About this RNA:
Chemical mapping of a 177-nucleotide RNA with 2A3 and DMS. Conditions: 150 mM KOAc, 10 mM MgCl2 and 150 mM bicine (pH 8.5), 24 C. It was measured as part of the RMDB library M2PK90. For 2A3, 1,692 sequencing reads were counted. Values are in units of 0.01, from 0 to 300, in steps of 10. For DMS the reverse transcriptase was MarathonRT. For DMS, 996 sequencing reads were counted. 2A3 adducts were read by reverse transcription with SuperScript II with manganese.

RNA sequence: GGGAACGACUCGAGUAGAGUCGAAAAGUAAAGGCGAGUGAGAAGAUCACAGAAUGCCAAAAGCACGCUUAGAAACGGACAUCUCUGAGCAUAAGUGCACGCAAUAAGCGAAAGAUGCCGAAAAAAAGAAUUUACGAAAGUUCGCUUUCGUAAAUUCAAAAGAAACAACAACAACAAC
Reactivity to 2A3 in 0.01 (KOAc 150mM, MgCl2 10mM, bicine 150mM(pH8.5), 24C), signal-to-noise 2, nucleotides 027 to 126: g010u040a000a170a030g040g000c040g040a040g010u030g000a030g010a200a130g030a020u030c010a000c010a050g070a120a040u160g000c000c000a010a020a000a040g000c010a010c030g000c000u030u000a010g020a030a110a040c050g000g080a000c000a030u040c020u020c020u050g010a020g000c000a020u050a230a000g040u010g010c050a020c080g000c000a000a300u220a300a080g020c010g020a130a060a030g010a000u020g000c000c000g070a060a070a000a000a000a000a000
Reactivity to DMS in 0.01 (KOAc 150mM, MgCl2 10mM, bicine 150mM(pH8.5), 24C), signal-to-noise 2, nucleotides 027 to 126: g000u000a060a080a130g010g040c010g030a100g000u000g000a030g020a120a170g000a150u000c020a010c030a100g000a180a080u000g020c020c000a060a030a120a050g010c030a030c010g020c000u010u000a010g000a020a120a100c040g010g000a070c020a050u000c050u000c030u020g000a010g010c040a080u010a060a180g020u000g010c020a100c060g020c070a090a100u030a040a100g010c030g010a090a040a090g000a030u040g020c030c030g040a000a000a010a080a090a050a170